Source information: This 207-nucleotide RNA was probed chemically with 2A3. The RNA was probed in 150 mM KOAc, 10 mM MgCl2 and 150 mM bicine (pH 8.5) at 24 C. Source: RMDB library RNAMAK, as collected in RNAgym.
RNA sequence: GGGAACGACUCGAGUAGAGUCGAAAAGGGGUCACAUCUCUAGCGUGGUGCGAAGACAGCCCACGGGAGAUAUCUGAAGCCUCCACGGAUAUCGAAGAACGUGGGUCGAGCACUCGGGUGUGACGGAGGCACCCAAACAUCCUGUUCGCAGGAUGAACGGUUUGAACUAGUUCGCUAGUUCAAACCGAAAAGAAACAACAACAACAAC
Reactivity to 2A3 in 0.01 (KOAc 150mM, MgCl2 10mM, bicine 150mM(pH8.5), 24C), signal-to-noise 1, nucleotides 027 to 156: g070g060g050g000u010c020a010c000a000u010c020u040c090u230a130g080c100g270u290g060g000u030g020c000g010a050a010g000a010c000a000g030c030c010c000a000c010g000g000g020a120g000a000u000a000u000c010u070g090a080a030g010c000c000u000c000c000a020c060g000g010a000u000a000u000c050g090a210a010g030a140a000c000g000u000g010g000g050u100c000g000a000g040c000a010c010u030c000g000g000g000u000g010u020g000a050c020g000g000a000g010g010c000a020c020c010c000a010a150a000c010a010u000c000c000u000g030u010u020c300g000c060a000g020g000a010u000g050a080a070